[RMDB]
RNA sequence: GGGAACGACUCGAGUAGAGUCGAAAACUGUGGGUCCCAGGCCUGGAGCUAGGGUUGGCAUUCUUGCCUGAAUUCUCCACUCUAUCCCAACCCCUGAGGCCGCCUGAGGAGGCUCAGACUGUGUCAGGCCCCAACUAUAUUUCGAUAUAGUUGGGGCAAAAGAAACAACAACAACAAC
Reactivity to 2A3 in 0.01 (KOAc 150mM, MgCl2 10mM, bicine 150mM(pH8.5), 24C), signal-to-noise 2, nucleotides 027 to 126: c040u040g030u030g040g020g030u050c010c030c010a020g000g020c000c030u070g020g030a060g000c020u060a070g010g190g030u080u070g060g000c040a090u100u040c050u070u060g030c010c000u010g050a060a080u180u050c110u020c020c010a020c040u060c000u050a120u080c000c020c010a010a060c020c000c000c000u000g010a070g100g020c030c000g000c000c000u020g000a040g030g030a070g150g000c020u030c010a000g010a050c010u030g010u000g090u150c050a010g130
Reactivity to DMS in 0.01 (KOAc 150mM, MgCl2 10mM, bicine 150mM(pH8.5), 24C), signal-to-noise 2, nucleotides 027 to 126: c110u000g010u000g030g000g000u000c130c050c020a120g030g020c030c020u010g000g000a080g020c040u000a090g010g020g010u010u010g010g010c110a100u000u010c090u010u010g010c030c000u000g000a060a120u000u010c060u010c010c010a040c020u000c080u010a080u000c040c010c000a080a220c070c040c010c010u000g000a040g000g010c000c030g000c010c010u010g000a050g010g010a120g000g000c020u000c030a020g000a050c030u000g010u000g000u000c020a070g000